RNA sequence: GGGAACGACUCGAGUAGAGUCGAAAAAGGGGCGGCAAGACACGGGCAAGACGAUCGCGUGGCAGGCGGUUAGCGAUCACGGUCGGCGUGGCCGCUGCGUUGUUCGUGGGCUCGGCAGCGUUCGCUGUCCACGGCACCGGUUCGCCGGUGCCGUGGAAAAAGAAACAACAACAACAAC
Reactivity to 2A3 in 0.01 (KOAc 150mM, MgCl2 10mM, bicine 150mM(pH8.5), 24C), signal-to-noise 2, nucleotides 027 to 126: a050g020g000g010g030c000g010g040c040a070a040g080a020c020a020c120g010g010g050c060a030a060g130a020c020g040a000u020c000g060c000g050u040g010g040c070a070g000g040c030g050g080u000u080a060g000c000g020a050u040c040a000c050g150g050u300c080g010g110c060g010u150g020g000c000c000g000c000u060g010c000g040u020u200g020u050u050c040g050u050g040g110g020c050u040c000g000g000c000a010g000c000g030u090u050c070g000c020u060g060
An RNA of 177 nucleotides, treated with 2A3 and read out base by base. Reactivities are given for positions 27 through 126. For 2A3, 738 sequencing reads were counted. The reactions ran in a buffer of 150 mM KOAc, 10 mM MgCl2 and 150 mM bicine (pH 8.5), at 24 C. It was measured as part of the RMDB library OK1LIB.